[RMDB]
RNA sequence: GGGAACGACUCGAGUAGAGUCGAAAAAUCGCAGGUUGAUCUCAGACUGCUGUGCUAGCCGUGAGCAAGGCUCUGUGGGCGUAGAACCCGCCGAGCCAGACACGGGAGGGAAUUUCCUGGUCUGCUGCUGUGUAAAGGGCUUCGGCCCUUUACACAGAAAAGAAACAACAACAACAAC
Reactivity to DMS in 0.01 (KOAc 150mM, MgCl2 10mM, bicine 150mM(pH8.5), 24C), signal-to-noise 2, nucleotides 027 to 126: a090u010c120g000c030a030g000g010u000u010g000a100u000c060u000c020a060g010a040c030u020g000c030u000g010u010g000c100u000a110g000c000c000g020u000g020a070g050c110a250a150g000g020c000u000c000u000g010u000g000g010g020c000g000u020a130g030a120a080c010c000c000g000c000c020g000a030g020c020c010a070g000a070c010a040c030g010g000g010a080g070g010g010a100a070u000u000u000c020c020u000g010g000u010c020u000g010c120u000g010